This 177-nucleotide RNA was probed chemically with 2A3 and DMS. The data come from the RNA Mapping Database (RMDB), library 15KREP. For 2A3, 1,063 sequencing reads were counted. For DMS, 1,567 sequencing reads were counted. Conditions: 150 mM KOAc, 10 mM MgCl2 and 150 mM bicine (pH 8.5), 24 C.
RNA sequence: GGGAACGACUCGAGUAGAGUCGAAAAGGAAGCCAGAACGACUGAGAAAGAAAAGAGAGCAACGGGGCUAGCUGCCGGGUGUUCCAUCCAUGGGAUCGGUGCCGAGUGAGGCUUAUCCCGGGGGUGAUCAGUGUAUCUACUUCGGUAGAUACACUGAAAAAGAAACAACAACAACAAC
Reactivity to 2A3 in 0.01 (KOAc 150mM, MgCl2 10mM, bicine 150mM(pH8.5), 24C), signal-to-noise 1, nucleotides 027 to 126: g010g010a030a000g030c020c000a000g020a030a020c050g050a010c030u070g070a010g110a090a200a040g110a050a130a020a000g050a000g000a010g030c000a000a080c020g010g010g020g080c040u030a020g030c020u020g020c040c000g050g040g030u050g010u030u010c020c010a040u040c040c000a040u100g030g070g000a020u060c080g110g030u040g100c000c000g030a020g060u130g050a040g010g030c000u040u040a060u010c000c000c000g000g000g000g000g010u030g000a010
Reactivity to DMS in 0.01 (KOAc 150mM, MgCl2 10mM, bicine 150mM(pH8.5), 24C), signal-to-noise 2, nucleotides 027 to 126: g000g030a090a080g000c040c030a080g000a210a070c060g040a070c050u010g000a130g020a070a100a070g000a070a040a120a120g010a110g000a070g010c070a030a070c090g010g000g000g000c060u000a060g010c070u000g000c050c050g000g000g020u000g020u000u000c000c010a040u010c040c110a090u010g020g010g000a040u000c170g010g000u000g000c040c000g000a110g020u010g020a120g020g010c030u010u010a120u000c000c010c010g010g010g020g010g000u000g000a120